[RMDB]
Conditions: 150 mM KOAc, 10 mM MgCl2 and 150 mM bicine (pH 8.5), 24 C. Chemical mapping of a 207-nucleotide RNA with 2A3 and DMS. For DMS the reverse transcriptase was MarathonRT.

RNA sequence: GGGAACGACUCGAGUAGAGUCGAAAAUAAAGGCUCUAAUGAUGUAUACGCAUCACGGCUUGAAUCGUAGACUUCGCAUUCUAUAACACGGUAAUAAGUAAUGCAUUUGCCCCAUUUAACGCCUAACCACAUUUCGGCCUCCUGUAAUAUAUACCCACAGCCUCUCAUAUUUCGAUAUGAGAGGCUGAAAAGAAACAACAACAACAAC
Reactivity to 2A3 in 0.01 (KOAc 150mM, MgCl2 10mM, bicine 150mM(pH8.5), 24C), signal-to-noise 3, nucleotides 027 to 156: u110a020a100a030g020g010c010u010c020u080a140a070u070g060a020u010g050u030a210u080a170c160g000c030a000u020c010a000c030g070g000c010u010u070g010a060a030u040c050g060u060a020g040a090c030u060u050c190g050c010a020u030u060c060u070a090u050a210a050c080a010c170g110g050u070a070a090u030a160a060g100u090a050a040u090g000c040a090u040u040u110g050c020c010c010c000a000u100u070u090a060a040c030g000c020c000u010a040a040c030c010a080c050a150u040u120u110c020g030g010c000c010u020c000c000u010g020u010a030a080u020a010u000a000u090a120c000c000c000a050
Reactivity to DMS in 0.01 (KOAc 150mM, MgCl2 10mM, bicine 150mM(pH8.5), 24C), signal-to-noise 1, nucleotides 027 to 156: u000a100a070a190g000g000c060u020c050u000a110a090u010g010a060u000g010u010a160u010a090c260g010c020a030u010c010a050c030g010g000c030u000u010g030a090a070u000c040g010u000a120g030a100c030u010u000c070g030c030a130u000u000c040u000a090u010a060a030c090a040c110g000g020u000a020a180u010a090a050g010u010a050a090u010g010c020a180u000u010u000g000c050c000c000c030a080u000u000u000a050a030c080g000c000c060u000a050a100c020c070a120c100a140u000u000u000c020g070g000c000c010u010c050c020u000g010u000a050a120u000a060u010a110u000a150c010c000c060a300
For 2A3, 1,249 sequencing reads were counted. For DMS, 1,665 sequencing reads were counted. Source: RMDB library OK3TST, as collected in RNAgym.